[RMDB]
RNA sequence: GGGAACGACUCGAGUAGAGUCGAAAAAUCCGGAUAACGAGUUGAUGUAUGGAGCCGGAUAGUUGCCUUUGCAUGUUGCGGCGCGGGAUGCGUUAUCCUGUUAACGGCGAGUGAAGAACAACCGAAAGGGUAUUUAUAUCUUCGGAUAUAAAUACCCAAAAGAAACAACAACAACAAC
Reactivity to DMS in 0.01 (KOAc 150mM, MgCl2 10mM, bicine 150mM(pH8.5), 24C), signal-to-noise 4, nucleotides 027 to 126: a050u010c010c010g000g000a100u010a080a060c080g010a120g000u000u020g000a090u010g000u020a070u010g010g000a220g040c010c000g000g000a020u010a050g020u000u010g000c040c070u010u010u000g010c030a060u000g000u000u000g010c050g010g010c090g000c040g000g000g000a050u020g020c150g010u010u030a020u000c010c020u000g000u020u020a110a180c050g010g010c010g000a080g030u010g000a040a050g000a090a120c060a110a050c030c050g000a060a050a080
Reactivity to 2A3 in 0.01 (KOAc 150mM, MgCl2 10mM, bicine 150mM(pH8.5), 24C), signal-to-noise 1, nucleotides 027 to 126: a000u030c000c000g000g000a090u050a000a040c070g010a020g010u020u080g040a140u080g010u100a080u010g130g050a010g020c000c000g000g000a000u000a000g060u020u020g000c000c000u040u020u210g000c010a050u040g000u020u090g110c000g050g000c000g000c010g000g060g030a060u060g040c010g030u000u010a010u010c010c000u000g030u010u120a090a000c010g040g000c040g000a120g030u000g010a010a070g060a060a000c080a000a000c000c000g050a080a000a000